[RMDB]
RNA sequence: GGGAACGACUCGAGUAGAGUCGAAAAAUUUAAGAUGGCACACUUCAAGCGUGAAAGAUCGCUGACAAAAGUGCCCGCACCCUGUUUCGAGCCAAAAAAGCAGGAGGGCGAAAGUAGGUUAAGAGACGUCUACGUACGUUUUCGAACGUACGUAGACAAAAGAAACAACAACAACAAC
Reactivity to DMS in 0.01 (KOAc 150mM, MgCl2 10mM, bicine 150mM(pH8.5), 24C), signal-to-noise 3, nucleotides 027 to 126: a050u040u030u030a030a010g000a090u000g010g010c000a020c080a120c060u000u010c200a040a050g000c000g010u020g000a090a110a270g000a080u030c000g020c000u000g000a120c280a080a010a150a120g040u010g010c000c020c000g010c040a050c070c000c030u000g000u000u010u040c120g040a150g000c160c220a000a060a110a110a020a020g010c020a020g000g020a070g000g000g000c010g020a070a020a040g000u010a050g020g000u010u020a040a050g030a120g020a100c170
Reactivity to 2A3 in 0.01 (KOAc 150mM, MgCl2 10mM, bicine 150mM(pH8.5), 24C), signal-to-noise 1, nucleotides 027 to 126: a000u160u190u150a020a000g070a040u090g000g010c000a000c000a000c020u000u090c100a180a000g010c020g000u030g030a000a020a000g170a050u240c000g000c000u000g000a000c020a000a000a000a000g020u000g020c000c000c000g000c000a080c000c000c000u020g030u000u000u050c070g000a070g040c020c060a010a290a000a050a070a000g000c000a000g000g000a150g070g000g000c000g000a070a000a000g010u070a020g020g020u090u110a040a000g020a010g000a040c060
This 177-nucleotide RNA was probed chemically with DMS and 2A3. Conditions: 150 mM KOAc, 10 mM MgCl2 and 150 mM bicine (pH 8.5), 24 C. It was measured as part of the RMDB libraries RFM100 and RFMREP. In probing experiments dimethyl sulfate is read out at A N1 and C N3, which are open when not base-paired. For DMS the reverse transcriptase was MarathonRT.